Chemical mapping of a 177-nucleotide RNA with DMS and 2A3. For DMS the reverse transcriptase was MarathonRT. For 2A3 the reverse transcriptase was SuperScript II with manganese. The DMS profile rests on 1,116 reads. The 2A3 profile rests on 2,554 reads.
RNA sequence: GGGAACGACUCGAGUAGAGUCGAAAACAAACUAACUUCGGUUAGUUUGAAACAACGCUGCAACGCGCAGAGCUCUCGCGAGAGCGCGAAUGCACAAAGAAAAAAGAUAAUCGUUCGCGAUUAUCAACCUCUAAUACCACUUCGGUGGUAUUAGAGGAAAAGAAACAACAACAACAAC
Reactivity to DMS in 0.01 (KOAc 150mM, MgCl2 10mM, bicine 150mM(pH8.5), 24C), signal-to-noise 2, nucleotides 027 to 126: c010a010a010a000c000u000a000a020c000u000u040c220g020g000u000u000a000g000u000u000u000g000a250a100a060c150a110a070c150g000c130u000g000c030a090a240c050g010c000g000c000a110g000a240g010c040u000c110u000c210g000c220g010a100g000a050g000c000g020c000g010a070a050u020g010c010a070c100a070a090a060g050a000a040a020a030a090a070g010a020u000a010a010u000c000g010u000u020c130g010c010g010a010u000u000a000u000c010a060a060
Reactivity to 2A3 in 0.01 (KOAc 150mM, MgCl2 10mM, bicine 150mM(pH8.5), 24C), signal-to-noise 2, nucleotides 027 to 126: c010a020a000a000c000u030a000a000c010u020u030c130g040g010u010u010a010g000u000u000u010g000a010a010a030c050a020a040c090g080c190u040g000c010a010a070c010g030c010g000c000a010g040a060g130c020u020c030u060c160g050c050g040a040g020a040g050c000g000c020g040a120a060u090g000c010a000c040a050a130a040g200a040a130a020a000a010a000g000a000u010a010a000u000c020g000u070u060c280g020c010g050a010u020u000a000u020c000a000a030